[RMDB]
RNA sequence: GGGAACGACUCGAGUAGAGUCGAAAAGAUUAAGUGGGAGCGUCGCCCUGUCGGUGCAUCGGAUAUUAAUUAGCCAGUGCGUGGCAUUACGCAUAUUGAUGUCUACUUUGGCGUAGACUUUGCCAAUUUAAGGAUUGAUGGGCAAUCCAGCCCUAGACGGAUGAGUAAUAUUCGUAUUACUCAUCCGAAAAGAAACAACAACAACAAC
Reactivity to 2A3 in 0.01 (KOAc 150mM, MgCl2 10mM, bicine 150mM(pH8.5), 24C), signal-to-noise 6, nucleotides 027 to 156: g060a030u150u170a100a040g040u100g030g010g010a040g020c030g030u040c020g040c010c010c020u050g070u090c060g000g010u030g020c010a030u040c060g050g000a010u020a030u130u120a140a090u100u090a050g020c010c010a030g020u030g020c020g010u020g010g030c080a030u050u170a020c020g000c020a000u040a080u070u130g080a080u070g010u000c000u010a030c020u040u110u160g090g000c030g020u020a020g020a050c000u060u050u040g010c010c000a050a030u070u070u090a110a040g040g010a040u030u060g040a040u100g020g000g000c000a000a020u000c020c000a010g000c000c000c000u020a050g030a040
Reactivity to DMS in 0.01 (KOAc 150mM, MgCl2 10mM, bicine 150mM(pH8.5), 24C), signal-to-noise 4, nucleotides 027 to 156: g010a150u000u000a050a100g010u000g010g010g000a090g020c070g010u000c060g000c020c000c010u000g010u010c050g020g030u000g020c030a060u000c030g020g010a070u000a080u000u000a080a130u000u000a110g020c020c020a080g010u000g020c040g030u010g030g020c070a070u000u020a050c050g000c030a080u000a100u000u000g020a090u000g020u000c020u000a040c020u000u000u010g020g040c100g010u000a070g020a060c050u000u000u000g030c000c010a020a080u000u000u000a090a110g010g010a120u000u000g000a100u010g010g010g030c030a070a100u000c090c050a140g000c020c010c010u010a090g020a170